This 177-nucleotide RNA was probed chemically with DMS and 2A3. Source: RMDB library TTRDEL, as collected in RNAgym. DMS adducts were read by reverse transcription with MarathonRT. For DMS, 3,948 sequencing reads were counted.

[RMDB]
RNA sequence: GGGAACGACUCGAGUAGAGUCGAAAAGAUAUGGAGCCAGCAACAGCUGUAAGGUUCGGAAACGAACCAACAGACAUGCUGACUCCUAAGUCAAAGCCUAACGUCAACUUCGGUUGACGUUAGGCAAGGAAAUUACAAUGUUCGCAUUGUAAUUUCCAAAAGAAACAACAACAACAAC
Reactivity to DMS in 0.01 (KOAc 150mM, MgCl2 10mM, bicine 150mM(pH8.5), 24C), signal-to-noise 3, nucleotides 027 to 126: g000a020u000a300u000g000g000a010g010c010c000a000g010c000a030a070c300a180g000c000u000g000u000a080a070g010g020u010u000c000g020g000a060a060a160c000g030a000a010c000c000a110a020c010a010g000a070c090a190u000g000c000u000g000a010c000u020c010c000u010a010a080g000u010c020a120a070a140g000c000c000u000a000a000c000g000u000c000a000a000c000u000u010c200g030g000u000u000g000a010c000g000u000u000a000g000g000c000a000a000
Reactivity to 2A3 in 0.01 (KOAc 150mM, MgCl2 10mM, bicine 150mM(pH8.5), 24C), signal-to-noise 4, nucleotides 027 to 126: g010a010u050a030u130g010g010a000g010c000c020a000g020c010a020a110c060a280g110c030u010g030u130a300a240g060g000u020u020c020g010g010a060a060a020c010g000a000a000c000c010a000a010c010a000g040a060c010a030u030g000c010u000g010a020c010u010c000c000u000a090a020g030u020c040a070a110a020g000c000c000u010a000a010c010g010u000c000a010a020c000u050u090c290g170g000u010u000g000a010c000g010u010u010a010g000g010c000a000a000